[RMDB]
RNA sequence: GGGAACGACUCGAGUAGAGUCGAAAAAACUGCUGCAGUCAAUGGUACAAAUGCAGCAUAUGUUGAUGUAGAAAGAGAUGAUGCAGGUGGUCAGUUUCUUGAUGUAAUAACAACAAAACGCACAGCAGGUAUUAGUGUUAAUGGUAUAACUGGUCAACCAGUUAUGAUAGUUCGCUAUCAUAACUGGAAAAGAAACAACAACAACAAC
Reactivity to DMS in 0.01 (KOAc 150mM, MgCl2 10mM, bicine 150mM(pH8.5), 24C), signal-to-noise 4, nucleotides 027 to 156: a070a050c090u000g010c000u000g010c010a050g020u000c060a070a080u000g020g030u000a100c060a060a060a090u000g020c000a020g000c010a030u000a020u000g000u000u010g010a130u000g040u000a100g010a100a090a090g000a110g000a070u000g020a090u010g020c040a080g030g030u010g000g020u010c020a090g010u000u010u010c020u000u020g020a090u020g030u040a060a080u000a080a080c040a070a130c120a040a040a050a090c080g020c060a050c060a070g010c040a040g020g010u000a080u000u000a090g030u000g020u000u000a040a070u000g010g020u000a090u010a060a060c040u010g020g000u000c070a070a220
Reactivity to 2A3 in 0.01 (KOAc 150mM, MgCl2 10mM, bicine 150mM(pH8.5), 24C), signal-to-noise 8, nucleotides 027 to 156: a000a000c080u050g000c000u010g000c010a030g060u150c080a070a170u160g110g010u180a100c070a040a090a030u050g000c000a000g000c010a020u080a040u050g030u020u030g040a080u040g030u070a040g080a070a070a000g050a000g010a030u080g010a020u060g010c030a010g030g050u010g000g010u030c030a030g010u020u060u020c030u050u080g030a060u030g020u050a090a100u080a220a040c080a020a000c020a020a110a000a040c050g020c030a030c010a060g040c020a020g030g020u100a080u090u100a080g030u020g010u090u060a060a040u050g000g040u050a050u040a140a050c040u040g030g020u040c010a030a030
Conditions: 150 mM KOAc, 10 mM MgCl2 and 150 mM bicine (pH 8.5), 24 C. This 207-nucleotide RNA was probed chemically with DMS and 2A3. It was measured as part of the RMDB library OK3TST. For 2A3, 7,217 sequencing reads were counted. Reactivities are given for positions 27 through 156. For 2A3 the reverse transcriptase was SuperScript II with manganese.